[RMDB]
RNA sequence: GGGAACGACUCGAGUAGAGUCGAAAACUUAACGCGUUCGCGCGUUAAGAAACAACAUAAACAUCGAGUUCACGAUGACACAAAUACCGUCAGUGUAGACGGAAAGCAUUCGCUUCGGCGAAUGCAAUCUCUGUAUUGACUUCGGUCAAUACAGAGAAAAAGAAACAACAACAACAAC
Reactivity to 2A3 in 0.01 (KOAc 150mM, MgCl2 10mM, bicine 150mM(pH8.5), 24C), signal-to-noise 6, nucleotides 027 to 126: c000u000u000a010a000c000g010c010g040u040u060c160g010c000g000c000g120u010u000a000a000g000a010a060a000c030a020a000c010a070u200a110a160a010c010a020u010c010g030a040g210u250u160c100a040c120g010a030u050g100a020c020a000c010a160a150a020u190a130c000c000g000u000c020a070g120u040g160u300a060g010a000c010g010g000a060a030a020g000c000a000u000u010c000g000c010u050u060c210g090g020c000g000a000a000u000g000c000a010a020
Reactivity to DMS in 0.01 (KOAc 150mM, MgCl2 10mM, bicine 150mM(pH8.5), 24C), signal-to-noise 4, nucleotides 027 to 126: c000u000u010a010a000c000g010c000g040u010u010c250g030c000g050c000g030u000u000a010a020g020a080a080a060c050a090a070c090a060u010a110a130a160c030a000u000c010g000a220g030u010u010c220a100c060g000a030u000g000a190c210a070c200a060a060a050u010a130c010c010g000u000c010a130g010u000g010u020a080g000a010c020g010g000a070a060a100g000c000a020u000u010c000g020c000u000u010c170g030g030c000g010a010a000u000g010c000a040a040
Conditions: 150 mM KOAc, 10 mM MgCl2 and 150 mM bicine (pH 8.5), 24 C. An RNA of 177 nucleotides, treated with 2A3 and DMS and read out base by base. Values cover nucleotides 27 to 126. The 2A3 profile rests on 8,346 reads. For DMS the reverse transcriptase was MarathonRT. 2A3 adducts were read by reverse transcription with SuperScript II with manganese.